Background
Structure probing data (DMS and 2A3) for a 177-nucleotide construct. Values cover nucleotides 27 to 126. The 2A3 profile rests on 3,559 reads.
RNA sequence: GGGAACGACUCGAGUAGAGUCGAAAAUGCAUGAAGCCCAGCUGGGGCGUGCGGGAGCCGCGGCUAGUCGCCUUGCAGAACAGGCCGCCCAGCUCAGCCGCCUGCUGGCAGAGGCCCAGGAGCGGAGGGAGAAAUAGACAUUCGUGUCUAUUUCUCCAAAAGAAACAACAACAACAAC
Reactivity to DMS in 0.01 (KOAc 150mM, MgCl2 10mM, bicine 150mM(pH8.5), 24C), signal-to-noise 5, nucleotides 027 to 126: u010g000c050a130u010g010a180a170g020c090c020c010a070g010c030u010g020g010g010g000c010g010u000g020c000g010g010g000a050g020c030c150g020c070g020g000c010u000a090g020u000c080g000c040c130u010u000g010c060a120g010a110a060c070a300g000g000c000c040g000c010c050c190a160g000c010u000c010a230g000c010c020g000c020c020u000g010c010u010g020g010c040a110g000a130g000g000c030c010c030a090g000g000a070g000c040g000g000a170g020
Reactivity to 2A3 in 0.01 (KOAc 150mM, MgCl2 10mM, bicine 150mM(pH8.5), 24C), signal-to-noise 2, nucleotides 027 to 126: u090g010c030a030u120g060a110a060g010c030c010c000a000g010c010u070g040g000g000g090c060g080u130g020c000g040g300g000a010g010c000c020g000c000g010g000c020u010a030g060u040c040g020c060c080u090u200g020c070a040g020a120a050c020a020g040g000c010c010g020c000c010c010a000g000c010u000c010a020g000c000c010g000c020c000u030g010c010u000g010g000c010a000g030a020g050g020c020c020c030a040g060g030a050g030c070g050g040a050g050
The DMS profile rests on 4,548 reads.